[RMDB]
RNA sequence: GGGAACGACUCGAGUAGAGUCGAAAAUGUGUGCAGGGACAGUAUGUGGAAACCAAGCUGGUCUGGGAGGUGGCACACAGACACAUAAAAUGAAGAUAACAAUAGUUGCAAGGCAUCCCAGGAUUGACCACUGGAGCAGUUUCGACUGCUCCAGUGGAAAAGAAACAACAACAACAAC
Reactivity to 2A3 in 0.01 (KOAc 150mM, MgCl2 10mM, bicine 150mM(pH8.5), 24C), signal-to-noise 1, nucleotides 027 to 126: u080g000u000g000u000g000c000a080g000g000g130a040c000a000g070u120a140u140g050u130g160g030a170a000a000c030c000a060a150g000c000u030g010g030u030c040u000g000g020g000a000g000g040u250g050g000c000a000c000a000c000a000g100a060c010a000c000a030u260a110a020a250a020u120g240a000a080g010a220u110a040a030c020a110a090u000a270g110u020u090g000c000a050a040g050g020c020a000u050c010c000c000a060g020g000a100u060u140g130a060
Reactivity to DMS in 0.01 (KOAc 150mM, MgCl2 10mM, bicine 150mM(pH8.5), 24C), signal-to-noise 2, nucleotides 027 to 126: u030g010u000g030u000g060c000a100g000g000g000a080c030a100g040u000a090u020g050u000g050g000a240a050a100c080c070a050a300g000c000u000g000g000u000c000u020g020g000g010a140g020g080u010g000g040c000a000c030a040c000a060g000a230c080a080c280a010u000a040a050a110a120u040g000a130a110g000a150u000a170a030c290a090a020u060a050g000u020u000g010c190a090a150g020g000c060a070u000c020c000c000a130g010g000a150u000u000g010a290
Annotation:
The data come from the RNA Mapping Database (RMDB), library OK1LIB. An RNA of 177 nucleotides, treated with 2A3 and DMS and read out base by base. Conditions: 150 mM KOAc, 10 mM MgCl2 and 150 mM bicine (pH 8.5), 24 C. For 2A3 the reverse transcriptase was SuperScript II with manganese. DMS (dimethyl sulfate) methylates the pairing face of unpaired adenines and cytosines.